[RMDB]
RNA sequence: GGGAACGACUCGAGUAGAGUCGAAAAGAGAGUGUGUAUGCAUGUGUGUGUGCUUGUGGUGGCUAUGGAAAGGGGGCACUGACUGGUGAUGCUGAUAUUGGAGUGCAUCUGAGGCUGUUGUAGAAAUCAUCUUCUCAGUGUUCGCACUGAGAAGAUGAAAAGAAACAACAACAACAAC
Reactivity to 2A3 in 0.01 (KOAc 150mM, MgCl2 10mM, bicine 150mM(pH8.5), 24C), signal-to-noise 1, nucleotides 027 to 126: g130a020g000a000g040u120g000u010g040u060a040u090g010c010a010u060g040u010g000u000g010u020g030u070g040c040u100u040g020u020g020g040u010g040g000c020u080a060u060g040g040a060a060a070g000g000g000g000g030c020a010c030u020g090a070c010u040g040g070u040g010a030u040g000c000u030g020a070u030a130u140u060g040g000a040g000u020g000c020a050u000c050u070g030a050g010g010c020u000g000u010u000g000u010a010g020a030a020a020u010
The record gives the reactivity of an RNA of 177 nucleotides to 2A3. It was measured as part of the RMDB library RFMREP. For 2A3 the reverse transcriptase was SuperScript II with manganese.